[RMDB]
RNA sequence: GGGAACGACUCGAGUAGAGUCGAAAACGCCAUCCAGGUAUAGGUACGGGUCGAGCUGAGCCAUUGCAGGAACAGAUAGACCGCCUCGGGAUGCUGCGACUGCGACGAGAUCCAGGCCGUGAUGUGGCUGAGUGCUAAGGUUCGCCUUAGCACUCAGAAAAGAAACAACAACAACAAC
Reactivity to DMS in 0.01 (KOAc 150mM, MgCl2 10mM, bicine 150mM(pH8.5), 24C), signal-to-noise 3, nucleotides 027 to 126: c040g000c070c020a030u020c010c010a040g010g030u000a070u040a050g000g010u000a090c250g020g010g000u020c020g010a150g010c020u000g000a100g010c030c020a170u010u030g040c210a100g000g000a040a080c030a010g000a020u000a170g000a090c040c010g000c050c030u030c070g020g010g000a030u000g030c080u000g010c030g000a110c040u000g010c050g000a080c060g010a100g000a080u020c030c010a150g000g000c020c040g000u010g000a060u010g040u020g000g010
Reactivity to 2A3 in 0.01 (KOAc 150mM, MgCl2 10mM, bicine 150mM(pH8.5), 24C), signal-to-noise 4, nucleotides 027 to 126: c020g020c020c000a040u010c020c010a040g100g030u150a140u130a140g060g020u080a080c090g090g000g020u030c030g000a050g050c030u030g010a010g040c040c010a110u050u220g060c190a090g000g030a040a030c000a010g010a030u150a030g070a020c000c000g030c020c020u020c040g030g000g010a020u070g030c050u050g000c020g070a060c040u040g040c000g050a070c030g050a010g010a110u000c010c000a020g000g000c010c000g010u060g030a100u150g000u060g050g000
Description
Source: RMDB libraries RFM100 and RFMREP, as collected in RNAgym. This 177-nucleotide RNA was probed chemically with DMS and 2A3. Values are in units of 0.01, from 0 to 300, in steps of 10. Values cover nucleotides 27 to 126. The reactions ran in a buffer of 150 mM KOAc, 10 mM MgCl2 and 150 mM bicine (pH 8.5), at 24 C. 2A3 adducts were read by reverse transcription with SuperScript II with manganese.